[RMDB]
RNA sequence: GGGAACGACUCGAGUAGAGUCGAAAAGAUAUGGAGUACCUACGGGAGUCCCACGGUCGGAAACGACCGGAGGACGAGGAUCGUAGGGUACUCCUAAGUCAAAGUUGUCCACUUCGGUGGACAACAAGAUAAUUGGGAUGUUCGCAUCCCAAUUAUCAAAAGAAACAACAACAACAAC
Reactivity to DMS in 0.01 (KOAc 150mM, MgCl2 10mM, bicine 150mM(pH8.5), 24C), signal-to-noise 4, nucleotides 027 to 126: g000a030u010a300u000g000g000a030g000u010a020c000c000u000a010c000g000g010g010a070g010u000c000c000c250a260c020g010g000u000c010g010g000a060a080a180c000g010a000c000c000g020g000a290g000g010a010c010g010a070g010g000a060u000c010g020u010a030g010g020g020u010a000c000u000c000c000u000a010a070g000u000c050a090a140a150g000u000u000g010u000c000c000a010c000u010u020c250g020g000u000g010g000a010c000a000a010c000a060a070
Reactivity to 2A3 in 0.01 (KOAc 150mM, MgCl2 10mM, bicine 150mM(pH8.5), 24C), signal-to-noise 3, nucleotides 027 to 126: g010a020u050a040u130g000g000a020g000u040a040c000c000u000a000c010g040g000g070a280g040u000c030c000c000a020c020g000g000u020c000g020g030a050a030a030c000g000a010c020c000g000g010a010g000g000a000c010g010a130g030g050a110u070c010g000u030a080g170g000g000u000a000c010u000c000c000u000a030a010g000u020c030a050a080a160g000u010u010g010u000c000c010a010c000u070u130c300g150g000u000g000g010a010c000a010a000c000a010a010